[RMDB]
An RNA of 177 nucleotides, treated with 2A3 and DMS and read out base by base.
The RNA was probed in 150 mM KOAc, 10 mM MgCl2 and 150 mM bicine (pH 8.5) at 24 C.
2A3 adducts were read by reverse transcription with SuperScript II with manganese.
It was measured as part of the RMDB library OK1LIB.
DMS adducts were read by reverse transcription with MarathonRT.
RNA sequence: GGGAACGACUCGAGUAGAGUCGAAAAUUCGACCGCGUCACCGCACACGGCUCACCGACGGUGGAGUUCUUCGGUACCCAGUUGACGCUGCCCCCAGAAGGUCGGUUCGGUUCGGUGGCAUCGGUGCCGAGGCCACACUGUUCGCAGUGUGGCCUCGAAAAGAAACAACAACAACAAC
Reactivity to 2A3 in 0.01 (KOAc 150mM, MgCl2 10mM, bicine 150mM(pH8.5), 24C), signal-to-noise 4, nucleotides 027 to 126: u110u080c030g060a000c000c010g020c030g020u010c000a010c010c000g040c000a000c000a010c020g040g000c050u100c070a020c000c000g030a030c040g020g040u050g020g040a070g030u050u030c040u050u020c020g090g040u070a110c030c020c020a030g000u010u030g020a020c040g070c050u140g120c000c000c000c000c000a050g050a200a030g140g000u050c030g010g000u060u140c030g000g000u010u050c010g000g020u010g000g000c010a040u140c020g010g000u020g020c020
Reactivity to DMS in 0.01 (KOAc 150mM, MgCl2 10mM, bicine 150mM(pH8.5), 24C), signal-to-noise 2, nucleotides 027 to 126: u010u010c000g000a060c060c010g020c300g010u000c000a070c000c060g000c180a080c070a150c010g000g030c220u010c230a020c060c000g020a120c090g000g100u000g000g010a080g000u000u000c000u000u030c080g020g000u000a020c040c040c010a220g010u010u020g000a130c100g010c000u000g030c020c000c020c080c130a060g010a260a110g000g010u000c080g000g000u000u050c000g020g020u030u050c020g000g000u000g000g000c000a060u040c000g020g000u000g000c090